[RMDB]
RNA sequence: GGGAACGACUCGAGUAGAGUCGAAAAAGGGUUACAUGCUGCGGAUCAAUUAGUGCGUACAGCCUGGGAGAAUGCGCAGAUAUCAGGUAAUUUCGGGGGCAUUCGUGCAUUGAUGUCUAAUGGGUUGGCCUCGAGAAAACAAGGUGAUUUUGACGGACUACACGUCCUUUUUCGAAAGGACGUGUAGAAAAGAAACAACAACAACAAC
Reactivity to DMS in 0.01 (KOAc 150mM, MgCl2 10mM, bicine 150mM(pH8.5), 24C), signal-to-noise 1, nucleotides 027 to 156: a120g000g020g020u000u000a070c070a180u000g040c020u010g000c030g030g000a120u000c030a040a150u010u000a060g000u020g020c020g030u000a000c110a100g000c050c030u000g020g030g060a180g030a060a030u000g010c040g040c010a100g000a060u000a060u000c020a070g000g060u010a030a270u000u000u000c080g000g020g060g000g050c100a040u000u000c050g050u000g000c000a080u000u000g000a100u030g000u000c060u000a110a110u000g000g000g030u010u020g020g040c040c000u000c040g000a140g010a040a030a000a150c050a070a080g000g010u000g010a180u000u000u000u000g010a130c040g000g000a250
Reactivity to 2A3 in 0.01 (KOAc 150mM, MgCl2 10mM, bicine 150mM(pH8.5), 24C), signal-to-noise 2, nucleotides 027 to 156: a020g110g000g000u130u060a070c050a050u110g010c030u010g000c010g000g070a130u120c020a050a090u060u030a010g020u070g150c010g070u120a150c120a060g030c010c030u050g000g000g010a130g000a090a060u080g040c010g000c000a000g010a000u010a010u050c020a020g060g000u020a090a110u030u110u060c030g050g010g000g000g000c000a020u020u090c010g060u030g030c020a030u030u090g000a050u100g020u000c010u030a090a060u020g030g040g000u060u030g000g060c000c030u070c070g020a070g020a020a060a000a000c070a020a020g010g030u030g030a090u050u040u110u120g020a040c040g030g080a020
An RNA of 207 nucleotides, treated with DMS and 2A3 and read out base by base.
The DMS profile rests on 2,357 reads.
The RNA was probed in 150 mM KOAc, 10 mM MgCl2 and 150 mM bicine (pH 8.5) at 24 C.